Conditions: 150 mM KOAc, 10 mM MgCl2 and 150 mM bicine (pH 8.5), 24 C. Chemical mapping of a 177-nucleotide RNA with DMS and 2A3.
RNA sequence: GGGAACGACUCGAGUAGAGUCGAAAACGUCGUGAACUAGCGACAAUGCGGUAGCUCCAUCGUUAUCUAACCGAAACAUCGUGACUAGUCGUAGAAUAGAACCAGGAGAGGGCGCUGGCAAACAAAGACGGCGUGUCUGAUUCGUCGGACGCGCCGUAAAAGAAACAACAACAACAAC
Reactivity to DMS in 0.01 (KOAc 150mM, MgCl2 10mM, bicine 150mM(pH8.5), 24C), signal-to-noise 5, nucleotides 027 to 126: c100g000u000c020g020u010g000a120a170c100u010a110g000c020g020a070c040a070a060u030g000c020g000g000u000a070g000c020u000c000c010a060u030c050g020u010u020a050u000c030u000a060a070c130c040g000a110a060a090c130a120u010c070g020u010g020a080c040u000a060g010u000c030g000u000a040g000a070a080u020a030g000a110a090c040c030a050g010g000a090g020a080g000g000g000c040g020c020u010g000g010c060a040a090a070c130a060a100a080g010
Reactivity to 2A3 in 0.01 (KOAc 150mM, MgCl2 10mM, bicine 150mM(pH8.5), 24C), signal-to-noise 4, nucleotides 027 to 126: c040g010u030c010g020u020g080a100a100c040u030a040g000c000g030a010c020a030a030u160g040c020g000g020u060a030g010c030u030c040c020a100u100c070g050u050u080a090u020c040u040a020a050c020c040g000a020a050a000c040a040u060c050g040u030g040a060c020u030a020g080u040c010g020u050a020g020a050a040u080a050g040a070a020c010c010a010g030g000a040g010a020g010g010g000c030g000c010u000g000g000c010a010a040a030c020a010a100a000g090
For DMS the reverse transcriptase was MarathonRT.